About this RNA
An RNA of 177 nucleotides, treated with DMS and read out base by base. In probing experiments dimethyl sulfate is read out at A N1 and C N3, which are open when not base-paired.

RNA sequence: GGGAACGACUCGAGUAGAGUCGAAAAGAUAUGGACCAGAUGUGGAGGGAGCAGGUUCGGAAACGAACCGCGAGGAUCUCCACCGCUCUGGUCCUAAGUCAAAGGAACAUUCUUCGGAAUGUUCCAAUCUUGUCAACCAGUUCGCUGGUUGACAAGAAAAAGAAACAACAACAACAAC
Reactivity to DMS in 0.01 (KOAc 150mM, MgCl2 10mM, bicine 150mM(pH8.5), 24C), signal-to-noise 1, nucleotides 027 to 126: g000a030u000a300u000g000g000a020c000c000a000g000a000u000g020u000g000g000a040g000g020g010a020g020c020a050g050g010u010u000c000g030g000a080a070a230c000g020a000a020c000c010g000c020g010a080g020g010a070u030c000u000c000c000a010c010c000g000c010u000c000u000g000g060u010c020c000u000a000a050g010u000c030a080a080a100g000g000a020a000c000a000u000u000c000u000u040c260g010g000a010a010u000g000u000u010c000c000a010a000
For DMS, 1,198 sequencing reads were counted.